RNA sequence: GGGAACGACUCGAGUAGAGUCGAAAAUCUGGACCGUUCGCGGUCCAGAAACUACCGAGAAUGCGACUCGGUAUAUAAACGCAAGCCUUGGAAACAAGGGAACACUCUGCUGCUUCGGCAGCAGAAAGUUUAUUGAAGCAUUCGUGCUUCAAUAAACAAAAGAAACAACAACAACAAC
Reactivity to DMS in 0.01 (KOAc 150mM, MgCl2 10mM, bicine 150mM(pH8.5), 24C), signal-to-noise 4, nucleotides 027 to 126: u000c000u010g000g000a010c000c000g030u000u020c210g020c000g000g000u000c000c000a000g010a010a090a130c070u000a290c010c000g010a000g010a030a050u000g010c030g010a040c000u000c020g010g010u000a020u010a030u000a010a010a010c040g060c020a050a240g010c010c000u000u000g010g000a190a090a200c010a010a010g000g000g010a070a090c150a090c160u000c000u000g000c000u000g000c000u000u010c200g020g000c010a000g020c000a000g000a000a030a070
Reactivity to 2A3 in 0.01 (KOAc 150mM, MgCl2 10mM, bicine 150mM(pH8.5), 24C), signal-to-noise 3, nucleotides 027 to 126: u000c000u000g000g010a010c010c010g030u040u030c220g000c010g110g010u000c000c000a000g000a000a000a000c010u040a040c000c010g000a000g020a070a080u050g000c010g050a050c030u000c000g000g040u000a000u000a010u010a050a000a010c010g000c020a050a070g110c010c010u000u010g010g010a040a030a020c010a000a000g010g020g010a060a030c050a030c050u040c000u000g020c010u000g020c010u020u050c230g100g000c000a000g020c000a000g000a000a000a000
Source: RMDB library M2PK50, as collected in RNAgym. An RNA of 177 nucleotides, treated with DMS and 2A3 and read out base by base. Values are in units of 0.01, from 0 to 300, in steps of 10. For 2A3 the reverse transcriptase was SuperScript II with manganese. For DMS the reverse transcriptase was MarathonRT. For 2A3, 7,935 sequencing reads were counted.